[RMDB]
RNA sequence: GGGAACGACUCGAGUAGAGUCGAAAACAACACGUCUUCGGACGUGUUGAAACGUGGUGCGUACGAUAACGCAUAUAAAGCCCAAGAGAAGCAGGGCAAAAAAAACAACCAGCUUCGGCUGGUUGAACAAUGGUACUCAGUUCGCUGAGUACCAUUGAAAAGAAACAACAACAACAAC
Reactivity to DMS in 0.01 (KOAc 150mM, MgCl2 10mM, bicine 150mM(pH8.5), 24C), signal-to-noise 4, nucleotides 027 to 126: c010a010a020c000a000c000g010u000c000u000u020c200g030g010a000c000g040u000g000u010u000g000a040a070a230c020g000u000g020g010u000g000c000g010u010a030c010g020a120u000a020a020c010g010c010a000u000a100u010a060a060a120g010c000c010c000a080a140g000a190g020a080a120g010c170a100g000g010g000c030a000a000a000a040a020a030a070a080c010a000a010c010c000a010g000c000u000u010c220g020g010c000u000g000g010u000u000g000a050a120
Reactivity to 2A3 in 0.01 (KOAc 150mM, MgCl2 10mM, bicine 150mM(pH8.5), 24C), signal-to-noise 2, nucleotides 027 to 126: c010a000a010c000a000c000g000u000c000u040u040c210g140g010a000c000g000u000g000u000u000g010a010a010a020c000g020u070g100g010u010g040c010g010u020a010c020g020a090u030a060a010c000g000c030a000u030a010u000a050a060a010g000c010c000c010a060a020g100a040g050a250a040g060c130a100g000g000g000c000a000a000a030a020a020a000a010a030c000a000a000c000c000a000g010c000u040u040c050g020g020c000u000g000g000u000u000g000a010a000

This 177-nucleotide RNA was probed chemically with DMS and 2A3. Conditions: 150 mM KOAc, 10 mM MgCl2 and 150 mM bicine (pH 8.5), 24 C. For DMS the reverse transcriptase was MarathonRT. In probing experiments dimethyl sulfate is read out at A N1 and C N3, which are open when not base-paired. For 2A3 the reverse transcriptase was SuperScript II with manganese. The data come from the RNA Mapping Database (RMDB), library M2PK50.